[RMDB]
Annotation
An RNA of 207 nucleotides, treated with 2A3 and DMS and read out base by base.
RNA sequence: GGGAACGACUCGAGUAGAGUCGAAAACGUCCCCGUCGUACAGAAUGGUAACAUAUCUCUCCAAAUAUCUGAGCUUGGGAAUACGGGGAAACCCAACCCCUUGGGAAGAUUGGGUAUAUGGCUAAAUUACAUCGAUUGUACUUCGGUACAAUCGAAACCUUCUUAGUGUGUUCGCACACUAAGAAGGAAAAGAAACAACAACAACAAC
Reactivity to 2A3 in 0.01 (KOAc 150mM, MgCl2 10mM, bicine 150mM(pH8.5), 24C), signal-to-noise 5, nucleotides 027 to 156: c040g080u040c030c010c010c000g150u120c030g010u100a100c080a120g130a150a120u090g050g010u130a180a020c010a010u080a040u040c100u000c020u030c080c030a080a130a150u200a080u060c040u030g030a020g080c020u030u010g000g000g040a070a040u100a100c080g010g000g000g000a030a020a040c000c000c010a020a070c000c010c000c000u010u030g020g020g010a020a020g010a030u030u060g010g000g040u030a010u000a010u040g030g000c060u090a060a080a070u220u110a060c060a120u020c010g000a000u000u000g000u000a000c000u020u030c130g040g000u000a000c000a010a000u000c000g000a000a000a000
Reactivity to DMS in 0.01 (KOAc 150mM, MgCl2 10mM, bicine 150mM(pH8.5), 24C), signal-to-noise 2, nucleotides 027 to 156: c090g010u000c000c000c000c060g000u010c090g040u000a160c110a140g010a110a100u000g010g010u010a090a210c100a080u010a040u000c030u010c090u010c050c050a030a180a140u000a110u000c060u020g000a300g030c060u000u000g000g010g010a140a140u000a090c090g000g020g000g040a180a130a130c010c010c000a050a120c030c010c010c060u010u000g020g010g000a110a140g000a090u010u000g010g030g010u020a020u010a050u000g030g060c080u000a060a040a150u030u000a080c080a130u000c000g030a050u010u000g030u000a000c000u000u000c260g030g000u000a000c000a000a000u010c010g000a000a020a050

Notes
Source: RMDB library M2RFPK, as collected in RNAgym. The RNA was probed in 150 mM KOAc, 10 mM MgCl2 and 150 mM bicine (pH 8.5) at 24 C. The 2A3 profile rests on 3,465 reads.